[RMDB]
RNA sequence: GGGAACGACUCGAGUAGAGUCGAAAAGAAAGAAAGAAAGAAUGGGUGGUUUCUCCGUUUGCCUGUUUUGCUGACGUUCAUUUGACUCAUUCUCAGCAAAAUAAGCAAAUGGAAAAUUCAUCCAUAAGCACUUACAUUUUUUCGAAAAUGUAAGUGCAAAAGAAACAACAACAACAAC
Reactivity to 2A3 in 0.01 (KOAc 150mM, MgCl2 10mM, bicine 150mM(pH8.5), 24C), signal-to-noise 9, nucleotides 027 to 126: g090a010a080a000g110a040a080a010g110a050a110a010g120a050a030u010g000g000g010u000g000g020u010u000u000c190u020c010c000g010u000u000u010g000c000c010u010g010u000u000u000u000g000c000u000g010a030c110g060u070u040c140a200u120u130u270g070a080c030u030c120a080u190u030c030u000c000a000g000c000a000a000a000a000u010a010a000g000c000a000a000a000u010g000g000a000a000a010a000u030u070c000a000u000c000c000a000u010a020a010
Reactivity to DMS in 0.01 (KOAc 150mM, MgCl2 10mM, bicine 150mM(pH8.5), 24C), signal-to-noise 3, nucleotides 027 to 126: g000a110a130a110g000a130a030a090g000a110a140a090g010a180a010u000g000g000g030u000g000g010u000u000u000c080u000c000c000g020u010u000u000g000c020c010u000g020u000u000u000u000g000c000u000g020a010c300g000u000u000c060a200u020u030u050g010a090c180u020c170a130u010u000c190u000c000a010g000c020a000a000a010a010u000a010a050g000c000a000a000a000u010g000g000a000a010a000a000u000u030c010a010u000c000c010a000u010a030a130
An RNA of 177 nucleotides, treated with 2A3 and DMS and read out base by base. For DMS the reverse transcriptase was MarathonRT. The data come from the RNA Mapping Database (RMDB), libraries RFM100 and RFMREP. Conditions: 150 mM KOAc, 10 mM MgCl2 and 150 mM bicine (pH 8.5), 24 C.